[RMDB]
RNA sequence: GGGAACGACUCGAGUAGAGUCGAAAAAGCUGCUCAGUAUACGUACUGAGCAGCAAGGGGUUGAAGCGGACACCCCUUCAGGCGCGCGCCCAAGCUCCGUACGCCGCCUCAUACGUGUGGCGGCGAAAUAGGUGUAUCUGGUUCGCCAGAUACACAAUCAACUUUUUGUGUUCGCACAAAAAGUUGAAAAAGAAACAACAACAACAAC
Reactivity to 2A3 in 0.01 (KOAc 150mM, MgCl2 10mM, bicine 150mM(pH8.5), 24C), signal-to-noise 2, nucleotides 027 to 156: a000g000c010u000g020c000u020c010a000g010u030a010u020a030c160g020u000a010c000u000g040a000g000c000a000g010c000a000a000g000g030g000g010u010u090g190a110a020g030c010g000g000a010c000a010c000c000c000c040u040u180c070a040g020g000c040g040c070g040c050g020c110c010c040a000a000g050c120u000c000c000g000u030a040c010g000c000c010g000c020c000u050c030a080u100a130c240g090u020g000u010g030g000c000g000g020c000g000a010a000a000u100a020g000g120u010g000u000a000u000c000u000g000g020u020u070c140g010c060c010a000g000a010u000a000c000a000c000a000a080
An RNA of 207 nucleotides, treated with 2A3 and read out base by base. Conditions: 150 mM KOAc, 10 mM MgCl2 and 150 mM bicine (pH 8.5), 24 C. Reactivities are given for positions 27 through 156.